[RMDB]
RNA sequence: GGGAACGACUCGAGUAGAGUCGAAAAGCACAAGACUUCGAACAUUAUAGCAGUUAGUAGUUUCCUAAACCCAUUGCAAUAUAUGGGACAGUAGAGGUCGCAAGCCUAUACUGUGCGGUGAACAUUCAAAAGGGAUGGUACUUCGGUACCAUCCCAACCUAAAGGACUAGUUCGCUAGUCCUUUAGGAAAAGAAACAACAACAACAAC
Reactivity to DMS in 0.01 (KOAc 150mM, MgCl2 10mM, bicine 150mM(pH8.5), 24C), signal-to-noise 2, nucleotides 027 to 156: g010c020a070c050a070a080g030a050c040u000u010c010g010a130a150c090a110u000u010a070u000a060g040c100a060g000u000u000a070g000u000a120g010u010u000u000c020c000u000a030a130a200c000c000c000a020u000u000g000c080a100a120u010a100u000a000u000g000g010g020a040c030a010g010u000a010g000a070g060g020u000c050g060c300a100a300g020c000c010u000a030u000a010c000u000g040u000g000c050g000g000u010g010a080a090c100a150u000u010c030a070a040a100a190g000g010g010a010u000g040g020u000a000c010u010u020c300g070g000u000a020c000c000a010u000c000c000c030a000a000
Reactivity to 2A3 in 0.01 (KOAc 150mM, MgCl2 10mM, bicine 150mM(pH8.5), 24C), signal-to-noise 2, nucleotides 027 to 156: g030c020a030c000a160a060g050a040c020u090u130c100g050a130a020c050a120u190u210a080u150a110g050c040a000g030u010u080a030g020u060a030g010u010u020u070c000c010u080a090a120a120c000c000c000a000u000u010g030c020a050a000u020a000u000a000u180g000g010g000a010c000a000g000u010a000g010a020g030g020u110c100g050c170a000a000g010c000c000u000a000u000a010c000u010g000u020g080c050g040g030u060g060a100a030c020a140u230u270c210a080a050a070a090g040g010g000a020u000g000g000u000a020c030u020u080c160g060g000u010a000c010c010a000u000c010c000c000a000a000